The data come from the RNA Mapping Database (RMDB), library RFMREP. Structure probing data (2A3 and DMS) for a 177-nucleotide construct. The 2A3 profile rests on 9,201 reads. The reactions ran in a buffer of 150 mM KOAc, 10 mM MgCl2 and 150 mM bicine (pH 8.5), at 24 C.
[RMDB]
RNA sequence: GGGAACGACUCGAGUAGAGUCGAAAAUGCGUCACGCAAGUGGGCCGAGGGUCGACUCCUGUGACGAAGGGGCUUCGAGGCACUGUCCCGCCCCGGAAAGUGGCAAAAAGCGUAUCUUCGGAUACGCCAGGAUCAAUAUGUUCGCAUAUUGAUCCUGAAAAGAAACAACAACAACAAC
Reactivity to 2A3 in 0.01 (KOAc 150mM, MgCl2 10mM, bicine 150mM(pH8.5), 24C), signal-to-noise 6, nucleotides 027 to 126: u110g010c010g010u010c010a010c020g020c070a050a040g020u040g020g020g040c040c070g250a280g160g130g010u030c020g090a020c000u020c020c060u080g010u020g010a010c020g010a060a090g050g010g000g000c030u130u120c170g050a200g020g050c050a040c220u090g050u050c010c000c000g010c010c000c010c000g000g000a090a070a010g080u110g060g020c050a010a030a010a050a060g000c000g000u000a000u020c010u040u090c200g060g000a010u000a010c000g000c010
Reactivity to DMS in 0.01 (KOAc 150mM, MgCl2 10mM, bicine 150mM(pH8.5), 24C), signal-to-noise 5, nucleotides 027 to 126: u010g010c020g020u000c000a000c020g000c300a070a050g010u010g020g000g010c000c020g010a130g030g020g020u000c000g000a020c010u000c100c080u000g020u000g000a020c030g010a080a080g020g010g010g020c070u010u000c150g010a180g010g000c020a080c080u010g000u010c010c000c010g000c020c000c000c040g010g010a050a100a060g010u000g010g000c070a060a080a070a100a130g000c010g000u000a000u000c000u000u010c230g020g000a020u000a000c000g000c000